[RMDB]
RNA sequence: GGGAACGACUCGAGUAGAGUCGAAAACAUCUGGGAGGAACGCGACGUGCCCAGGCACCACGUCUACUCCAAGGUGAUGUGCUGGGUCACGAUCGACCGGGCGAUCAAACUGGCCGCCCACUACGACCGGCCCGCCGAGCCGAACUGGGUGCAGCUGUCACUACGGAUACUUCGGUAUCCGUAGUGAAAAAGAAACAACAACAACAAC
Reactivity to 2A3 in 0.01 (KOAc 150mM, MgCl2 10mM, bicine 150mM(pH8.5), 24C), signal-to-noise 1, nucleotides 027 to 156: c050a070u050c040u070g070g010g000a040g000g100a130a000c050g050c090g030a040c020g030u020g000c000c010c010a000g040g000c010a050c000c000a020c050g000u230c120u060a050c060u120c140c000a120a240g070g070u030g000a100u010g080u220g080c050u220g000g000g090u080c030a000c080g140a180u000c000g060a100c170c000g000g000g080c030g000a000u000c180a260a090a030c070u080g000g030c020c010g040c000c010c020a000c120u260a120c020g000a080c020c010g010g010c000c000c000g020c050c030g090a050g000c000c000g120a070a000c050u000g050g010g000u010g050c000a010g000c020u040g030
Structure probing data (2A3) for a 207-nucleotide construct. For 2A3 the reverse transcriptase was SuperScript II with manganese.